[RMDB]
RNA sequence: GGGAACGACUCGAGUAGAGUCGAAAACAAAGAUUCAUGGGGUCAGCUUGGAAGACUCUCUGCCCAUGAGGUGUAGCUGAGUGAGAAUGAAGUCAGAAGUGAGAGCAGGGAUACCAGAGCUCCAAGCCGUCCGAUAGGAUUUCGAUCCUAUCGGACGAAAAGAAACAACAACAACAAC
Reactivity to 2A3 in 0.01 (KOAc 150mM, MgCl2 10mM, bicine 150mM(pH8.5), 24C), signal-to-noise 2, nucleotides 027 to 126: c020a010a130a000g080a080u110u150c040a020u090g000g000g020g120u090c020a030g010c030u050u010g030g020a090a050g060a160c010u000c030u000c000u030g010c000c020c000a030u040g020a030g180g060u090g020u040a040g060c040u030g030a030g040u080g060a080g060a140a080u150g000a090a020g060u030c050a010g010a110a000g080u040g020a110g000a010g070c000a030g000g030g000a030u050a090c020c010a060g030a000g130c020u000c010c000a040a000g040c020
Reactivity to DMS in 0.01 (KOAc 150mM, MgCl2 10mM, bicine 150mM(pH8.5), 24C), signal-to-noise 2, nucleotides 027 to 126: c080a050a120a090g010a100u000u000c050a060u000g000g000g000g030u010c140a100g000c020u000u010g000g010a050a060g000a160c050u000c000u010c020u010g010c000c030c030a060u020g010a050g000g020u020g000u010a100g000c020u010g010a140g010u000g010a070g010a100a090u020g010a100a090g000u000c020a070g000a100a140g020u010g000a110g020a080g010c040a030g000g010g010a070u010a000c080c080a110g000a080g020c040u010c020c040a010a050g000c080
The record gives the reactivity of an RNA of 177 nucleotides to 2A3 and DMS. For 2A3 the reverse transcriptase was SuperScript II with manganese. The 2A3 profile rests on 1,519 reads. For DMS the reverse transcriptase was MarathonRT. The DMS profile rests on 1,562 reads.